RNA sequence: GGGAACGACUCGAGUAGAGUCGAAAAUGAAGGGCCGUGGCUUGAUCAUGACUCACUGCAGCCUCGACCUCCUGGGCUCCAGCGAUCCUCCCACCCCAGCCUCCCCAGUAGCUGGGACCGCAGGCGCUCACACUCCAUUGUUCGCAAUGGAGUGUGAAAAAGAAACAACAACAACAAC
Reactivity to DMS in 0.01 (KOAc 150mM, MgCl2 10mM, bicine 150mM(pH8.5), 24C), signal-to-noise 2, nucleotides 027 to 126: u020g000a150a150g000g020g010c030c040g030u010g010g000c030u000u000g010a060u030c070a080u000g010a040c060u000c050a050c080u010g010c070a050g020c010c020u000c060g010a050c060c020u000c060c040u000g000g000g010c020u000c020c020a040g010c040g010a090u010c050c040u010c020c020c030a170c070c010c000c010a080g000c020c070u020c040c020c020c030a100g000u010a080g020c030u000g000g000g000a080c070c040g020c060a030g000g000c130g000c080
Reactivity to 2A3 in 0.01 (KOAc 150mM, MgCl2 10mM, bicine 150mM(pH8.5), 24C), signal-to-noise 1, nucleotides 027 to 126: u160g030a030a050g060g000g000c080c010g000u030g040g010c050u090u160g100a070u230c050a130u180g050a050c030u020c100a050c050u050g050c050a030g000c010c000u010c020g060a080c000c000u060c020c030u020g050g000g000c020u030c030c000a000g010c030g030a030u050c040c010u010c000c020c000a010c010c000c000c000a000g000c000c000u120c010c010c030c010a020g050u050a010g040c030u000g020g000g000a000c000c020g030c000a020g030g000c050g000c000